[RMDB]
RNA sequence: GGGAACGACUCGAGUAGAGUCGAAAAUGUUUAGUGGAUUAUCUGAUCAGCACAUGUGUGACAGUGUUGAUCACAAGUCAUUGCCAGCUCUGUUCAUUUUCUUCCCUGGUCUAACUCAAUAAUUGCCAUUUGAUCAAUUCUUCGGAAUUGAUCAAAUAAAAGAAACAACAACAACAAC
Reactivity to 2A3 in 0.01 (KOAc 150mM, MgCl2 10mM, bicine 150mM(pH8.5), 24C), signal-to-noise 9, nucleotides 027 to 126: u060g030u040u100u060a080g010u060g060g040a080u060u050a090u200c050u040g010a000u010c000a000g040c010a030c100a150u050g060u030g090u140g170a050c010a060g000u000g000u010u010g000a010u000c000a000c010a010a010g010u040c020a070u020u120g040c010c010a020g000c020u010c020u080g060u050u020c020a030u040u020u040u010c010u010u020c000c010c000u010g000g030u000c020u040a070a050c020u030c110a060a120u100a140a110u100u080g020c020c010
Reactivity to DMS in 0.01 (KOAc 150mM, MgCl2 10mM, bicine 150mM(pH8.5), 24C), signal-to-noise 6, nucleotides 027 to 126: u010g000u000u010u000a090g020u000g010g010a070u010u000a080u020c190u000g020a010u000c020a020g000c010a010c000a080u010g030u000g030u020g030a100c070a050g020u000g010u000u000g010a010u000c020a030c170a050a090g010u010c040a060u020u010g000c040c040a050g020c020u010c030u000g000u000u010c050a060u020u010u000u020c080u010u000c020c000c000u000g000g010u000c050u000a050a080c080u010c070a060a060u020a060a100u000u000g010c100c080